[RMDB]
RNA sequence: GGGAACGACUCGAGUAGAGUCGAAAACUGCUCCGGUUCGCCGGAGCAGAAAUGGAUCCAAUGGAAUCCAAAAUGGAAAUGGAGAUCCAAUAAGGGAUAUCAAAACCAGGAUGUUCGCAUCCUGGAAGUAUACGGUUUAGUUCGCUAAACCGUAUACAAAAGAAACAACAACAACAAC
Reactivity to DMS in 0.01 (KOAc 150mM, MgCl2 10mM, bicine 150mM(pH8.5), 24C), signal-to-noise 6, nucleotides 027 to 126: c000u000g000c000u000c000c010g020g020u010u010c230g020c010c000g020g000a010g000c000a000g000a010a050a080u000g020g010a030u000c000c010a160a120u010g010g010a040a200u000c000c000a020a040a110a140u010g020g020a070a130a140u000g000g000a050g010a110u000c000c000a040a050u000a130a130g000g000g000a030u000a040u000c060a050a050a160a170c000c000a010g000g010a020u000g010u000u010c210g010c010a000u000c000c000u000g000g000a010a030
Reactivity to 2A3 in 0.01 (KOAc 150mM, MgCl2 10mM, bicine 150mM(pH8.5), 24C), signal-to-noise 7, nucleotides 027 to 126: c010u000g000c000u000c000c000g010g070u040u040c210g010c060c010g010g000a000g010c000a000g000a000a000a000u040g030g020a010u010c000c000a030a110u060g040g020a020a020u000c020c020a050a050a040a170u290g100g020a070a070a040u060g020g010a070g030a210u000c000c010a000a000u150a050a050g140g000g010a030u040a030u200c070a040a040a020a110c000c000a000g000g000a000u010g020u060u080c220g020c110a000u000c000c000u000g000g000a000a000
This 177-nucleotide RNA was probed chemically with DMS and 2A3. The reactions ran in a buffer of 150 mM KOAc, 10 mM MgCl2 and 150 mM bicine (pH 8.5), at 24 C. For DMS the reverse transcriptase was MarathonRT. For DMS, 7,529 sequencing reads were counted. Reactivities are rounded to 0.1 and cut off at 0 and 3.